RNA sequence: GGGAACGACUCGAGUAGAGUCGAAAAACGUACUCUCGUGAGUACGUACGUUCGAACACGUGAGAACGUACACGAGUGUGUUCACACGUGAUCACUCUCUCGAGAGUGAUCGUGUGUGUGAUCGUUCGUGAGAGUACGAUCACGUGAACUCUCGUACCUACCCGUGAAGCUUCGGCUUCACGGGUAGAAAAGAAACAACAACAACAAC
Reactivity to 2A3 in 0.01 (KOAc 150mM, MgCl2 10mM, bicine 150mM(pH8.5), 24C), signal-to-noise 1, nucleotides 027 to 156: a010c000g020u000a000c010u000c050u070c110g190u190g170a060g110u100a030c030g000u000a010c020g010u000u020c030g010a110a030c010a000c020g010u030g020a010g000a080a010c020g010u020a000c010a010c000g000a000g040u090g000u030g000u070u050c020a010c000a000c000g040u020g000a000u020c000a000c000u000c000u000c010u070c170g100a040g010a000g010u010g000a010u000c000g000u000g000u030g000u000g000u000g040a030u030c000g010u020u000c000g000u000g040a060g000a020g020u010a000c000g000a010u040c010a010c000g030u010g050a070a040c080u070c000u000c070g030u020a070c030